[RMDB]
RNA sequence: GGGAACGACUCGAGUAGAGUCGAAAACUCGAAUCUUUCGAGAUUCGAGACUCACGAAGUGUCAAUAAGAUCGAAAAGAUCGCCGAGCAUAAAAUAGACACAAUGCUGCUUGAUUCGUCAAGCAGAAGCAUAAUGUACUCUUCGGAGUACAUUAUGCAAAAGAAACAACAACAACAAC
Reactivity to DMS in 0.01 (KOAc 150mM, MgCl2 10mM, bicine 150mM(pH8.5), 24C), signal-to-noise 6, nucleotides 027 to 126: c020u000c000g000a000a000u000c000u000u010u010c160g010a020g020a010u000u000c000g000a030g020a090c030u000c020a150c210g020a120a120g000u000g010u000c000a120a100u020a120a130g000a010u000c000g000a100a050a100a140g000a020u000c000g010c220c130g000a050g000c300a090u010a040a030a050a110u000a080g000a010c020a000c010a110a080u010g000c000u000g000c000u000u000g000a020u010u010c220g020u000c000a000a010g010c000a000g000a050a120
Reactivity to 2A3 in 0.01 (KOAc 150mM, MgCl2 10mM, bicine 150mM(pH8.5), 24C), signal-to-noise 8, nucleotides 027 to 126: c000u000c000g000a000a000u000c010u030u110u160c220g080a020g000a010u010u000c000g010a000g020a020c020u020c020a070c070g120a280a080g010u010g000u020c010a030a070u110a220a060g010a000u010c010g060a070a210a080a160g000a010u010c010g000c030c030g100a070g040c050a090u180a130a160a090a040u120a080g010a000c000a000c000a020a070u170g010c000u010g000c000u010u010g010a020u030u070c190g030u010c090a000a000g000c000a000g010a010a010